[RMDB]
RNA sequence: GGGAACGACUCGAGUAGAGUCGAAAACUGAACUGGCAGACCGCAGUUUGCUGGUAAAAAGAACAGGUCAAGACCAUUUAUCUGGCUUAGUUGAAUGGAGAAGACAAGUUGGCGGAGUGUAUGGACCCGAGGAGGUACGAUUCGUCGUACCUCCUCGAAAAGAAACAACAACAACAAC
Reactivity to DMS in 0.01 (KOAc 150mM, MgCl2 10mM, bicine 150mM(pH8.5), 24C), signal-to-noise 2, nucleotides 027 to 126: c030u050g010a080a020c000u000g000g010c020a020g030a000c020c300g000c160a150g010u000u000u000g000c010u000g010g020u020a030a030a080a150a070g010a030a060c070a070g020g000u000c040a030a110g020a080c020c010a020u000u000u000a070u000c030u010g000g000c150u000u010a070g040u000u010g010a050a050u020g010g000a050g020a080a120g000a080c040a070a020g000u000u020g000g040c080g010g000a080g040u020g000u000a090u010g000g010a090c040c030